[RMDB]
RNA sequence: GGGAACGACUCGAGUAGAGUCGAAAAAGUGAGACACUCACUCGUCACACCUCACUCGUAUGACGGAUCUCUGCCCCAUCCAUCAGUGUUCAUGGAUGGGAGUGAGUUGGAUGGGAGUGAGAGACUUGUAGUCACUUCCCCAUCCGGAUGGGAGUGAUGUCUAUCUCUCUUUCGAGAGAGAUAGACAAAAAGAAACAACAACAACAAC
Reactivity to DMS in 0.01 (KOAc 150mM, MgCl2 10mM, bicine 150mM(pH8.5), 24C), signal-to-noise 3, nucleotides 027 to 156: a050g030u010g010a100g050a170c080a110c020u000c000a020c010u010c020g010u000c010a110c040a060c080c040u000c140a080c080u000c090g010u000a060u010g000a060c000g030g000a080u000c040u010c020u000g020c030c020c000c020a010u000c000c010a010u000c040a160g040u020g020u000u010c070a050u000g010g000a040u000g020g010g000a000g000u010g020a060g010u000u000g000g010a060u000g000g030g030a100g040u010g000a050g040a110g020a040c040u010u000g020u000a150g030u000c000a090c010u000u000c050c000c000c020a070u000c020c020g000g000a130u020g000g020g010a080g010u010g000a110
Reactivity to 2A3 in 0.01 (KOAc 150mM, MgCl2 10mM, bicine 150mM(pH8.5), 24C), signal-to-noise 4, nucleotides 027 to 156: a030g110u100g020a070g030a030c080a040c100u030c000a020c000u040c020g160u090c030a060c010a040c090c010u020c000a010c000u010c030g210u140a120u220g090a060c030g070g060a130u060c070u000c030u140g100c000c010c000c000a000u000c000c000a000u030c060a090g180u050g080u300u160c050a010u010g010g000a000u010g000g000g000a020g000u030g000a000g000u040u080g040g020a060u060g030g050g010a050g020u120g020a020g000a020g020a010c030u080u130g100u150a060g040u020c010a000c020u060u070c010c000c000c000a050u020c020c020g040g070a090u070g060g050g020a020g010u020g020a030
Description:
The data come from the RNA Mapping Database (RMDB), library OK3TST. This 207-nucleotide RNA was probed chemically with DMS and 2A3. For DMS the reverse transcriptase was MarathonRT. The reactions ran in a buffer of 150 mM KOAc, 10 mM MgCl2 and 150 mM bicine (pH 8.5), at 24 C. For DMS, 7,155 sequencing reads were counted.